[RMDB]
RNA sequence: GGGAACGACUCGAGUAGAGUCGAAAAACCUUUGUGUGCGGAACCAGGCGAAGAACAUAUGAAUGUAGACUCGCCCAUUGGGCGAGUUAUUAUAGCAUAUGGGAGCCUGCUAACGCACACUCUGGUAAACUCUGUGGUUGUUCGCAACCACAGAGAAGAUAUAAUCGACGUUCGCGUCGAUUAUAUCAAAAGAAACAACAACAACAAC
Reactivity to DMS in 0.01 (KOAc 150mM, MgCl2 10mM, bicine 150mM(pH8.5), 24C), signal-to-noise 2, nucleotides 027 to 156: a020c000c010u000u000u000g020u010g050u000g000c000g000g020a190a180c300c000a030g000g010c000g010a060a170g020a180a120c030a000u010a010u000g030a070a170u010g010u000a110g000a060c020u000c000g000c000c000c010a230u000u020g080g030g030c000g010a010g010u000u000a000u010u000a010u000a040g030c000a020u000a010u000g000g010g010a300g020c010c020u000g010c000u010a090a300c000g000c010a030c000a010c000u010c030u030g010g030u000a060a050a110c000u000c010u010g040u010g020g000u000u000g050u000u010c300g020c000a020a020c000c010a020c000a020g010a010g010a040a060
Reactivity to 2A3 in 0.01 (KOAc 150mM, MgCl2 10mM, bicine 150mM(pH8.5), 24C), signal-to-noise 3, nucleotides 027 to 156: a010c000c000u000u010u010g000u010g000u010g010c000g000g000a020a020c010c000a000g020g000c010g110a300a050g030a070a020c000a000u000a040u060g030a150a110u130g030u020a030g010a050c000u000c000g010c020c050c130a300u270u300g020g010g010c010g000a000g000u000u000a000u010u020a010u010a010g010c000a000u000a000u010g000g000g020a010g000c000c010u000g020c030u120a090a010c000g000c020a000c000a000c000u000c000u010g000g010u030a020a070a030c000u000c010u000g010u000g010g020u020u010g030u060u040c240g020c150a000a000c000c000a000c000a000g000a000g000a000a000